RNA sequence: GGGAACGACUCGAGUAGAGUCGAAAAGCAGCGGCUAACUACAUCGUCAACGACCACAUCACUGUAUUGCAACGUCAGCUGAUGCUGAGACUGCAAACGCUGGCCGAUACGAUCUAAAUGUAAUCGAUAUCACAGCGGAUUUCGAUCCGCUGUGAUAAAAAGAAACAACAACAACAAC
Reactivity to 2A3 in 0.01 (KOAc 150mM, MgCl2 10mM, bicine 150mM(pH8.5), 24C), signal-to-noise 2, nucleotides 027 to 126: g050c050a010g020c000g030g000c030u040a020a100c030u070a050c020a120u030c050g110u050c010a060a040c020g010a090c000c000a020c020a030u070c010a020c080u050g040u120a160u120u050g000c060a090a010c070g070u030c000a000g000c010u080g060a070u170g000c000u000g050a080g040a050c030u060g000c050a000a040a000c040g000c040u010g030g060c020c020g080a030u030a070c000g000a020u050c000u110a110a160a080u150g050u090a020a050u060c010g060a050
Reactivity to DMS in 0.01 (KOAc 150mM, MgCl2 10mM, bicine 150mM(pH8.5), 24C), signal-to-noise 2, nucleotides 027 to 126: g000c070a080g020c040g040g020c100u000a050a090c100u000a060c130a030u010c030g030u000c070a040a090c070g010a070c030c000a040c160a070u010c100a070c120u010g020u000a030u000u000g000c100a040a170c250g000u020c000a020g010c050u000g010a240u000g000c010u000g020a180g000a080c100u020g000c000a000a030a100c150g030c070u000g000g010c000c020g000a070u000a020c000g000a050u000c070u000a040a110a030u000g020u010a020a130u000c080g000a220

An RNA of 177 nucleotides, treated with 2A3 and DMS and read out base by base. For 2A3 the reverse transcriptase was SuperScript II with manganese. For DMS the reverse transcriptase was MarathonRT. For DMS, 1,269 sequencing reads were counted. The reactions ran in a buffer of 150 mM KOAc, 10 mM MgCl2 and 150 mM bicine (pH 8.5), at 24 C.